[RMDB]
RNA sequence: GGGAACGACUCGAGUAGAGUCGAAAAGAUAUGGAGAGUAACUCGCGACGAUCUAUGGGCACUCCCCGGUAUAUCGGAAACGAUAUACCGGGGUUGCCAGCAUAGGGAGCGAGAGCUCUCCUAAGUCGCUUAGUAAAACCUUCGGGUUUUACUAAGCAAAAGAAACAACAACAACAAC
Reactivity to DMS in 0.01 (KOAc 150mM, MgCl2 10mM, bicine 150mM(pH8.5), 24C), signal-to-noise 1, nucleotides 027 to 126: g000a070u010a300u020g000g000a020g000a030g010u000a110a150c000u000c010g020c000g000a110c300g020a030u000c000u010a030u000g010g000g000c010a030c300u000c000c020c000c000g000g020u010a000u000a010u000c000g020g010a050a060a240c010g040a030u000a000u010a000c020c000g000g000g000g000u010u000g000c000c000a050g010c000a030u000a020g010g000g000a020g010c030g000a010g000a300g030c000u000c000u000c000c010u000a010a050g010u010c040